[RMDB]
This 207-nucleotide RNA was probed chemically with 2A3. 2A3 adducts were read by reverse transcription with SuperScript II with manganese. The reactions ran in a buffer of 150 mM KOAc, 10 mM MgCl2 and 150 mM bicine (pH 8.5), at 24 C. For 2A3, 782 sequencing reads were counted.
RNA sequence: GGGAACGACUCGAGUAGAGUCGAAAAGGGAUUGAGUUACUAGCUCGCAAAAUAAAUGAGGCUGUUGGUCAUGAGACCAUCAGUGUGCCAAGUAGAAAAGAAGAAAUUCUGGACACUCAUCAAGCCAGAGCUGCAAAAGCAUGUGGUGAAGGCACAACGAUGACCGGAGUUUCGACUCCGGUCAUCGAAAAGAAACAACAACAACAAC
Reactivity to 2A3 in 0.01 (KOAc 150mM, MgCl2 10mM, bicine 150mM(pH8.5), 24C), signal-to-noise 2, nucleotides 027 to 156: g090g030g020a040u110u150g040a070g070u120u040a130c080u090a050g000c000u010c020g070c010a040a040a170a240u100a040a110a040u160g030a040g100g000c000u000g000u020u020g000g000u000c070a160u290g070a020g000a300c000c000a000u000c000a000g000u020g000u030g000c000c160a120a060g020u110a020g120a020a070a040a000g080a020a030g060a050a100a050u040u020c040u000g040g010a010c010a000c020u030c030a060u070c070a160a000g000c000c020a010g010a000g010c010u010g000c020a000a020a120a100g030c090a100u120g020u060g000g050u030g040a040a010g000g000c020a030c010a060a120